[RMDB]
RNA sequence: GGGAACGACUCGAGUAGAGUCGAAAAGAUAUGGAUCCACAAGAUCGACUGGGUCGUUGAAAUAGUGCUAAGCUCGGAAACGAGCUUAGCACUAUGGAGACCCACUCGAUAAUGUGGAUCCUAAGUCCUAUGUCUACUGGUUCGCCAGUAGACAUAGAAAAGAAACAACAACAACAAC
Reactivity to DMS in 0.01 (KOAc 150mM, MgCl2 10mM, bicine 150mM(pH8.5), 24C), signal-to-noise 2, nucleotides 027 to 126: g020a080u010a280u020g010g000a000u000c000c010a000c000a030a070g010a020u000c000g010a010c140u010g020g000g030u000c000g020u010u020g000a210a130a010u000a000g010u010g000c000u010a000a000g010c000u000c000g000g000a110a140a300c010g000a020g030c000u000u010a000g010c000a000c000u000a000u000g000g010a110g000a020c000c000c000a000c060u000c000g010a010u000a030a020u000g000u000g000g000a000u000c000c010u000a010a080g000u000c020
Chemical mapping of a 177-nucleotide RNA with DMS. The DMS profile rests on 3,287 reads. Reactivities are given for positions 27 through 126. It was measured as part of the RMDB library TTRINS.